RNA sequence: GGGAACGACUCGAGUAGAGUCGAAAAGGGGCGCCGGGUUGUCAUUGAUGAGGCUCCGUCACUCCCUCCUCACCUGCUGCUGCUCCACAUGCAGCGGGCCGCCACCGUCCAUCUCCUUGGCGACCCGGAGAUACAGACCAUUCGUGGUCUGUAUCUCAAAAGAAACAACAACAACAAC
Reactivity to DMS in 0.01 (KOAc 150mM, MgCl2 10mM, bicine 150mM(pH8.5), 24C), signal-to-noise 2, nucleotides 027 to 126: g010g000g010g030c080g050c070c030g000g010g020u010u000g000u010c050a080u000u020g010a090u010g000a170g000g010c060u000c020c040g000u000c030a090c070u000c000c000c010u000c010c010u000c070a150c050c040u020g010c020u000g010c000u000g010c080u000c100c120a080c110a060u010g000c020a030g000c000g020g010g000c050c040g000c030c030a050c060c030g020u000c040c050a050u000c070u000c030c010u010u000g010g000c010g000a040c020c000c000g010
Reactivity to 2A3 in 0.01 (KOAc 150mM, MgCl2 10mM, bicine 150mM(pH8.5), 24C), signal-to-noise 1, nucleotides 027 to 126: g010g000g000g020c010g030c000c000g000g010g000u060u000g080u080c060a040u000u250g080a060u070g050a120g090g000c010u010c030c000g030u040c010a040c040u040c030c000c000u030c020c010u010c020a040c020c000u010g000c000u010g000c020u030g000c020u090c090c060a100c020a070u120g010c010a000g010c000g000g010g000c010c000g020c010c010a080c000c030g080u040c000c000a020u060c050u050c020c020u070u080g000g010c000g040a020c000c000c040g000